[RMDB]
RNA sequence: GGGAACGACUCGAGUAGAGUCGAAAAGGCUGCACUGUCCCCUAAUAACAGAUGGGAACGUAAUUGCAGGGAUGCUGCUACUAUGUGUAAGGCUUGGCAGAAUGGCGACAGCAUGGAUAGUUUCAAGGUAUCCUGCUAUAACACAAUGAAAGCUAAGACUAGAUCUGCUGUUCGCAGCAGAUCUAGUAAAAGAAACAACAACAACAAC
Reactivity to DMS in 0.01 (KOAc 150mM, MgCl2 10mM, bicine 150mM(pH8.5), 24C), signal-to-noise 1, nucleotides 027 to 156: g000g000c020u000g010c000a150c160u000g040u000c040c000c020c050u010a110a130u000a030a300c170a060g000a160u010g030g050g000a030a050c010g000u000a030a090u000u000g070c000a110g010g030g060a200u010g010c020u000g000c020u000a130c110u000a030u000g030u000g020u000a090a130g050g020c140u010u000g000g000c000a040g060a070a050u040g020g090c150g020a150c300a030g000c060a040u010g010g000a020u000a040g020u010u010u000c090a040a040g040g000u000a090u000c020c000u000g000c040u000a070u000a080a170c050a140c120a020a120u000g000a020a020a030g030c020u000a020a080g000
Reactivity to 2A3 in 0.01 (KOAc 150mM, MgCl2 10mM, bicine 150mM(pH8.5), 24C), signal-to-noise 2, nucleotides 027 to 156: g030g010c050u000g000c060a000c040u040g060u080c000c000c000c000u060a080a080u110a270a100c080a060g050a110u120g020g020g000a050a040c080g030u140a060a080u080u130g020c030a010g020g070g010a050u090g080c030u010g000c000u010a050c040u040a050u200g030u010g010u050a000a030g030g020c000u000u070g000g000c010a010g000a080a030u030g020g000c030g000a000c030a000g050c000a040u040g000g030a030u010a030g080u070u140u220c120a030a010g090g000u040a030u030c010c000u020g000c030u010a030u060a180a050c080a000c030a120a060u060g060a100a110a010g000c040u070a100a040g040

Chemical mapping of a 207-nucleotide RNA with DMS and 2A3. The data come from the RNA Mapping Database (RMDB), library OK3TST. For 2A3, 871 sequencing reads were counted.